[RMDB]
RNA sequence: GGGAACGACUCGAGUAGAGUCGAAAAAGACGGGCGCGUGUGAACUCUGACGACGAACUCACGCUCUCGCUCGGCAACAACGAAACGAAAGCAGUCGUCUCGCGUGGCUACGACCAAACUAAUGUCGUUUCGCAGAACACUAUCAAAGCAAUCGACCCUGUCAGUCAUCAUUCGUGAUGACUGACAGAAAAGAAACAACAACAACAAC
Reactivity to 2A3 in 0.01 (KOAc 150mM, MgCl2 10mM, bicine 150mM(pH8.5), 24C), signal-to-noise 1, nucleotides 027 to 156: a020g080a050c000g020g010g000c020g000c000g000u010g000u060g080a290a180c050u030c100u250g130a110c140g020a010c120g040a170a080c000u010c000a020c020g000c020u030c000u000c000g060c100u050c010g060g040c030a020a020c030a010a010c100g050a020a020a020c010g000a140a000a000g080c080a000g060u020c000g030u000c000u040c070g030c060g030u100g010g020c030u060a040c060g070a020c020c040a100a030a040c070u220a160a080u280g070u050c000g000u000u050u060c060g000c020a070g070a190a030c090a040c070u240a170u250c110a160a080a050g020c040a020a110u130c060g040a120c090c020

Chemical mapping of a 207-nucleotide RNA with 2A3. For 2A3 the reverse transcriptase was SuperScript II with manganese. The RNA was probed in 150 mM KOAc, 10 mM MgCl2 and 150 mM bicine (pH 8.5) at 24 C.